Structure probing data (DMS and 2A3) for a 207-nucleotide construct. The data come from the RNA Mapping Database (RMDB), library M2RFPK. For DMS the reverse transcriptase was MarathonRT. The RNA was probed in 150 mM KOAc, 10 mM MgCl2 and 150 mM bicine (pH 8.5) at 24 C.
RNA sequence: GGGAACGACUCGAGUAGAGUCGAAAAAACAAACAUCAAAUCGCAUAGCAAAGAGUCAAAAAAAUAGAGAGCUUUGCGAGACCUACCAAGGGUGAAGAGCUACCAUCCAAGGAGCUGAAGAGAAAUCGAGAGCUCACGGCGUUCGCGCCGUGAGCAACAGUUACUUUACCUUCGGGUAAAGUAACUGAAAAGAAACAACAACAACAAC
Reactivity to DMS in 0.01 (KOAc 150mM, MgCl2 10mM, bicine 150mM(pH8.5), 24C), signal-to-noise 1, nucleotides 027 to 156: a100a020c010a080a090a110c080a240u000c080a070a060a030u000c060g040c010a050u000a020g030c030a070a080a080g030a140g000u000c030a030a030a050a060a050a110a080u000a100g020a140g010a220g000c050u000u010u000g070c010g000a030g000a110c000c010u000a140c050c050a090a130g020g000g000u000g020a090a160g010a080g000c010u010a110c070c000a040u000c010c020a070a160g020g010a150g000c030u000g000a110a110g000a100g010a050a030a090u010c060g000a090g020a140g060c000u000c000a000c100g060g030c020g100u000u000c300g000c040g000c000c010g000u000g010a000g080c000a000a000
Reactivity to 2A3 in 0.01 (KOAc 150mM, MgCl2 10mM, bicine 150mM(pH8.5), 24C), signal-to-noise 3, nucleotides 027 to 156: a000a000c110a050a050a000c090a120u190c060a070a120a070u010c010g000c010a020u040a010g000c020a040a200a050g050a090g080u150c120a150a180a110a050a030a010a030u300a080g090a030g010a010g020c000u010u040u040g000c000g010a020g040a030c000c000u040a090c050c070a070a060g050g000g010u030g010a050a030g050a010g060c020u100a140c010c010a020u010c050c020a030a090g010g010a020g020c040u050g030a040a010g050a020g060a050a060a040u120c100g030a010g000a030g260c000u000c010a000c000g010g030c010g010u050u140c110g020c020g000c070c000g010u000g010a000g000c000a000a000